[RMDB]
RNA sequence: GGGAACGACUCGAGUAGAGUCGAAAAGCAGCAGGCUUACGAGCCUGCUGCAAUAAAAGCCAGGACGGUCACCUGGCGGGUGGUGACAAGUGUGAUCACUUGGGUGGUGGCUGUGUUUGCGUCUCUCCCAGGAAUCAUCUUUACCAGAUCUGUCAAACCUAGUAUUACGUUUCGACGUAAUACUAGGAAAAGAAACAACAACAACAAC
Reactivity to 2A3 in 0.01 (KOAc 150mM, MgCl2 10mM, bicine 150mM(pH8.5), 24C), signal-to-noise 2, nucleotides 027 to 156: g010c000a000g000c000a000g010g000c000u110u090a090c280g070a010g000c000c000u000g010c000u000g010c000a000a000u000a000a010a000a000g000c020c000a010g010g000a060c110g100g060u100c010a000c050c000u010g060g000c010g000g020g000u040g000g010u030g010a020c080a060a060g090u130g000u020g300a030u020c040a040c120u080u040g040g020g030u090g010g060u030g020g020c100u050g080u050g090u130u220u220g040c040g020u030c020u000c010u000c010c000c000a000g010g080a010a040u130c010a030u000c020u020u060u070a040c010c010a040g000a110u030c040u020g120u080c000a000a020a070

The record gives the reactivity of an RNA of 207 nucleotides to 2A3. The 2A3 profile rests on 1,060 reads. The reactions ran in a buffer of 150 mM KOAc, 10 mM MgCl2 and 150 mM bicine (pH 8.5), at 24 C. 2A3 adducts were read by reverse transcription with SuperScript II with manganese.